[RMDB]
An RNA of 177 nucleotides, treated with DMS and read out base by base.
RNA sequence: GGGAACGACUCGAGUAGAGUCGAAAAGAUAUGGAGCCUCGGGAGCGCUUCACACUCAGGCUGAUAUACUCGGAAACGAGUAUGUUUGGCCUGAGUGUGAAGAACUACGCUUAGAGGCUCCUAAGUCCAACGCUAAGUUGUUCGCAACUUAGCGUUGAAAAGAAACAACAACAACAAC
Reactivity to DMS in 0.01 (KOAc 150mM, MgCl2 10mM, bicine 150mM(pH8.5), 24C), signal-to-noise 1, nucleotides 027 to 126: g000a080u000a300u000g030g010a010g010c000c000u000c000g020g000g000a020g010c040g020c000u010u020c000a000c020a010c000u000c000a000g000g040c020u000g000a010u000a000u000a000c000u000c000g020g000a190a120a300c020g030a000g000u000a000u000g020u000u000u010g060g020c010c000u000g000a000g000u000g030u000g010a000a000g010a060a040c150u010a300c020g000c000u000u000a300g000a020g030g000c000u000c000c000u000a000a110g000u010c070

Annotation
The reactions ran in a buffer of 150 mM KOAc, 10 mM MgCl2 and 150 mM bicine (pH 8.5), at 24 C. It was measured as part of the RMDB library TTRINS. For DMS, 1,266 sequencing reads were counted.